The record gives the reactivity of an RNA of 177 nucleotides to DMS and 2A3. DMS adducts were read by reverse transcription with MarathonRT. Conditions: 150 mM KOAc, 10 mM MgCl2 and 150 mM bicine (pH 8.5), 24 C. Source: RMDB libraries RFM100 and RFMREP, as collected in RNAgym.

[RMDB]
RNA sequence: GGGAACGACUCGAGUAGAGUCGAAAACCCCACAAAGGGGGGUGAAAUAGGGCUUGAAAUCAGGUGGCGAUGGAGCGACGGGGCAUAAAAGGCCUCUCUGGGAACGACUUGAGUGCAAACUCAUGGUGUUUCCCUAAAGUUUCGACUUUAGGGAAACAAAAGAAACAACAACAACAAC
Reactivity to DMS in 0.01 (KOAc 150mM, MgCl2 10mM, bicine 150mM(pH8.5), 24C), signal-to-noise 4, nucleotides 027 to 126: c060c000c010c100a110c170a080a130a150g020g000g010g000g010g020u020g000a050a070a080u020a060g010g000g000c030u000u010g000a080a080a040u020c060a070g010g020u020g010g010c060g000a070u010g000g020a040g000c060g000a060c120g000g000g000g000c070a070u040a020a070a120a120g010g000c030c020u000c000u010c030u010g030g010g010a060a040c060g010a120c060u010u000g010a030g000u000g000c210a050a080a060c020u010c000a010u020g000g010u010
Reactivity to 2A3 in 0.01 (KOAc 150mM, MgCl2 10mM, bicine 150mM(pH8.5), 24C), signal-to-noise 4, nucleotides 027 to 126: c000c000c030c000a040c050a030a110a050g030g010g000g000g020g010u040g060a040a040a040u160a060g000g040g000c030u040u100g070a020a060a060u120c040a030g080g000u010g040g040c040g050a040u090g040g020a020g020c010g020a020c050g010g020g000g000c000a010u140a110a150a010a000g040g000c010c000u000c000u000c000u000g010g000g020a060a040c020g040a010c040u020u030g000a000g020u040g010c050a010a050a130c000u010c010a030u050g080g010u020